This 207-nucleotide RNA was probed chemically with DMS and 2A3. 2A3 is a SHAPE reagent: it acylates the 2'-hydroxyl of flexible nucleotides of all four kinds. Values are in units of 0.01, from 0 to 300, in steps of 10. Conditions: 150 mM KOAc, 10 mM MgCl2 and 150 mM bicine (pH 8.5), 24 C. For 2A3 the reverse transcriptase was SuperScript II with manganese. For DMS, 3,646 sequencing reads were counted.

RNA sequence: GGGAACGACUCGAGUAGAGUCGAAAACACACAUGACUCGCCUCCUCUCAGUGACCACAGGUGAGACGUGGUCUUGUAACACAGUGGUUAAGAAUGUGACUUUGGAGCCAGCCUGCUAGGGGCUGAAUUCUGACUCAGCCAUUUACUAACUGUGUGACAUACUGACGACUUUCGAGUCGUCAGUAUGAAAAGAAACAACAACAACAAC
Reactivity to DMS in 0.01 (KOAc 150mM, MgCl2 10mM, bicine 150mM(pH8.5), 24C), signal-to-noise 2, nucleotides 027 to 156: c030a140c080a090c030a120u030g010a110c020u010c030g030c010c000u000c030c000u000c000u000c070a190g020u000g010a130c050c050a090c100a050g010g010u010g030a100g010a130c110g000u010g000g000u010c020u020u000g000u000a160a080c020a010c030a020g050u010g000g010u000u000a110a050g010a120a050u000g000u000g010a010c020u010u000u010g070g020a040g000c050c020a030g010c030c000u020g020c080u010a180g020g000g010g020c010u000g020a000a060u000u010c090u000g010a070c080u010c060a060g030c030c000a040u000u000u000a090c010u010a080a080c030u000g000u010g010u000g020a210
Reactivity to 2A3 in 0.01 (KOAc 150mM, MgCl2 10mM, bicine 150mM(pH8.5), 24C), signal-to-noise 3, nucleotides 027 to 156: c060a010c000a000c000a040u070g060a070c010u040c060g020c010c000u020c020c050u020c010u000c040a090g050u040g140a030c050c020a030c050a070g050g080u110g060a020g000a050c060g000u040g000g000u030c030u010u080g020u010a050a000c010a000c000a010g020u010g000g070u050u110a050a050g040a090a000u050g060u070g150a190c080u090u060u090g020g010a010g010c000c000a010g020c000c000u050g130c150u160a120g110g010g000g000c000u000g000a000a020u120u010c020u040g090a090c010u010c000a010g030c000c000a000u000u030u020a020c020u060a300a060c000u000g000u010g020u030g020a010